RNA sequence: GGGAACGACUCGAGUAGAGUCGAAAAGACGGAGACGAGCAAGUGGAAUAUCCUCUCAAACCAAUGGUUGAGAAUGCAAAACCUACACUUCGUCAAAUCAUGCACCAUUUCUCAGAUGCAGCUGAAGGCGCUAGAGAGCCUUCGGGCUCUCUAGCGCAAAAGAAACAACAACAACAAC
Reactivity to 2A3 in 0.01 (KOAc 150mM, MgCl2 10mM, bicine 150mM(pH8.5), 24C), signal-to-noise 1, nucleotides 027 to 126: g050a010c000g000g000a040g050a160c050g000a080g170c030a190a170g080u060g000g020a110a060u030a030u200c020c000u000c000u010c080a050a130a130c000c000a120a180u300g000g000u000u000g000a000g000a080a000u060g030c110a060a060a060a060c000c000u000a000c000a000c030u000u030c000g060u000c010a000a000a000u180c000a000u190g000c030a000c000c000a030u000u160u000c080u000c010a030g000a020u040g030c040a000g000c000u090g080a020a000g130
This 177-nucleotide RNA was probed chemically with 2A3. For 2A3, 456 sequencing reads were counted. High 2A3 reactivity points to a flexible backbone, as in loops and unpaired stretches. 2A3 adducts were read by reverse transcription with SuperScript II with manganese.